[RMDB]
RNA sequence: GGGAACGACUCGAGUAGAGUCGAAAACCUCCAGAGUUCGCUCUGGAGGAAAAGCUAGCGUCCUAAUCUAUCCCGGGUUAUGGCGCGAAACUCAGGGUAAAAAAAGGUACGGCUUCGGCCGUACCAACAUCUUAUACCACUUCGGUGGUAUAAGAUGAAAAGAAACAACAACAACAAC
Reactivity to 2A3 in 0.01 (KOAc 150mM, MgCl2 10mM, bicine 150mM(pH8.5), 24C), signal-to-noise 3, nucleotides 027 to 126: c000c000u000c010c000a010g000a000g010u070u120c150g080c060u000c000u010g000g000a000g000g000a020a010a000a010g070c070u130a030g000c000g000u010c000c000u000a000a010u000c000u020a080u040c020c000c000g000g000g010u000u010a020u030g020g000c010g000c010g000a030a010a010c090u120c150a090g110g050g120u200a100a090a000a000a030a040a110g010g000u000a020c010g000g000c010u040u060c140g090g000c000c000g000u000a000c000c000a000a000
Reactivity to DMS in 0.01 (KOAc 150mM, MgCl2 10mM, bicine 150mM(pH8.5), 24C), signal-to-noise 3, nucleotides 027 to 126: c000c000u010c000c000a010g000a010g020u010u020c230g010c000u000c000u000g000g010a020g010g000a000a030a050a080g010c120u010a210g000c000g020u010c010c050u000a010a010u000c020u000a120u020c020c020c010g010g000g000u000u000a020u000g020g010c000g000c000g010a060a070a070c060u000c080a070g000g010g010u020a010a000a070a130a060a120a090g010g010u000a000c000g000g000c000u000u000c220g030g000c000c000g000u000a000c010c000a020a060
Structure probing data (2A3 and DMS) for a 177-nucleotide construct.
Source: RMDB library M2PK50, as collected in RNAgym.
DMS adducts were read by reverse transcription with MarathonRT.
The 2A3 profile rests on 6,551 reads.
The RNA was probed in 150 mM KOAc, 10 mM MgCl2 and 150 mM bicine (pH 8.5) at 24 C.